An RNA of 177 nucleotides, treated with DMS and 2A3 and read out base by base. Reactivities are rounded to 0.1 and cut off at 0 and 3.
[RMDB]
RNA sequence: GGGAACGACUCGAGUAGAGUCGAAAAGAUAUGGAGAUUGCUGCUUUUGACGGUGGUCGGAAACGACCAAACCGAUAAGCAGGAUCUCCUAAGUCAAAACGAAGAUUGAGUUCGCUCAAUCUUCGAACAAAAGACUGGAGUUCGCUCCAGUCUUUUGAAAAGAAACAACAACAACAAC
Reactivity to DMS in 0.01 (KOAc 150mM, MgCl2 10mM, bicine 150mM(pH8.5), 24C), signal-to-noise 2, nucleotides 027 to 126: g010a060u000a300u010g000g000a000g000a020u000u000g010c000u000g020c010u010u010u000u000g000a160c110g010g000u000g010g000u000c010g010g010a090a070a160c000g000a010c000c000a020a040a080c010c000g000a120u000a000a030g030c010a010g000g000a010u000c000u000c000c000u000a010a060g020u010c040a040a050a110a200c050g000a020a020g010a010u000u000g000a020g010u000u010c220g010c000u000c000a010a010u000c000u000u000c010g020a030a110
Reactivity to 2A3 in 0.01 (KOAc 150mM, MgCl2 10mM, bicine 150mM(pH8.5), 24C), signal-to-noise 2, nucleotides 027 to 126: g030a040u070a060u140g000g000a000g000a020u050u120g300c010u010g020c000u090u060u140u270g080a070c010g030g000u000g000g000u020c030g000g050a030a090a030c030g000a000c010c000a070a120a040c030c020g030a070u030a090a020g030c000a010g020g000a000u000c000u000c000c000u000a040a020g030u010c000a020a000a070a110c030g000a010a000g000a000u000u030g020a010g030u130u160c300g040c180u010c000a000a020u000c010u030u010c010g000a030a000
For 2A3 the reverse transcriptase was SuperScript II with manganese. For DMS, 2,264 sequencing reads were counted. Source: RMDB library TTRDEL, as collected in RNAgym. The RNA was probed in 150 mM KOAc, 10 mM MgCl2 and 150 mM bicine (pH 8.5) at 24 C.